Conditions: 150 mM KOAc, 10 mM MgCl2 and 150 mM bicine (pH 8.5), 24 C. Structure probing data (2A3 and DMS) for a 177-nucleotide construct.
[RMDB]
RNA sequence: GGGAACGACUCGAGUAGAGUCGAAAACGACAGAACUUCGGUUCUGUCGAAAUAAAAUCAGCGGUUAAAAACCUGGCGUUAUAACCGCUGAACGCCAGCUUAAAAGAUUCGUGUUCGCACGAAUCAAUCAUUUGGUUAACUUCGGUUAACCAAAUGAAAAAGAAACAACAACAACAAC
Reactivity to 2A3 in 0.01 (KOAc 150mM, MgCl2 10mM, bicine 150mM(pH8.5), 24C), signal-to-noise 2, nucleotides 027 to 126: c000g000a000c000a020g000a010a020c000u070u100c190g140g000u020u000c000u000g000u000c000g000a000a000a000u040a000a080a010a120u030c010a000g000c000g010g060u010u020a070a150a020a040a030c030c040u190g250g000c110g020u000u000a060u020a070a010c010c000g000c010u010g000a000a000c000g030c010c000a070g000c070u140u160a050a090a010a130g010a000u010u010c000g000u010g040u070u070c210g040c050a000c000g010a000a010u000c010a010a020
Reactivity to DMS in 0.01 (KOAc 150mM, MgCl2 10mM, bicine 150mM(pH8.5), 24C), signal-to-noise 2, nucleotides 027 to 126: c010g000a010c040a010g000a000a020c000u010u000c180g050g000u000u000c000u000g010u000c010g000a020a070a050u020a060a080a160a080u010c010a010g010c000g000g000u000u000a000a080a100a020a030c030c040u030g020g000c110g010u000u010a200u000a020a010c000c000g010c000u000g000a000a080c120g000c010c010a140g010c200u000u010a040a090a130a090g000a010u000u000c010g040u000g010u000u010c200g030c010a030c000g000a000a000u000c000a040a080
For 2A3, 2,737 sequencing reads were counted.